[RMDB]
RNA sequence: GGGAACGACUCGAGUAGAGUCGAAAACGCGGCCAGCACGAAGACGGUCUUCCGGUCGACGGUACCGGUACUCCGGGCGAUCUCCCAGCGGGCGACGCGACCGAUUCUCGAGAGCGACGCCAGGAGCUACUCGACUCCCUUUCGAGGGAGUCGAGUAAAAAGAAACAACAACAACAAC
Reactivity to DMS in 0.01 (KOAc 150mM, MgCl2 10mM, bicine 150mM(pH8.5), 24C), signal-to-noise 1, nucleotides 027 to 126: c070g000c040g020g000c040c030a080g030c170a090c110g000a090a100g000a120c070g020g010u000c020u040u040c000c020g000g020u020c140g110a120c130g000g010u000a060c000c010g000g000u020a100c110u000c000c000g010g020g030c030g000a080u000c100u000c000c010c010a200g040c040g000g000g020c010g000a150c030g010c000g000a130c060c010g000a100u000u010c210u000c020g000a060g000a130g020c060g000a130c060g000c040c050a130g020g000a080g030c100

Conditions: 150 mM KOAc, 10 mM MgCl2 and 150 mM bicine (pH 8.5), 24 C. The record gives the reactivity of an RNA of 177 nucleotides to DMS. For DMS the reverse transcriptase was MarathonRT.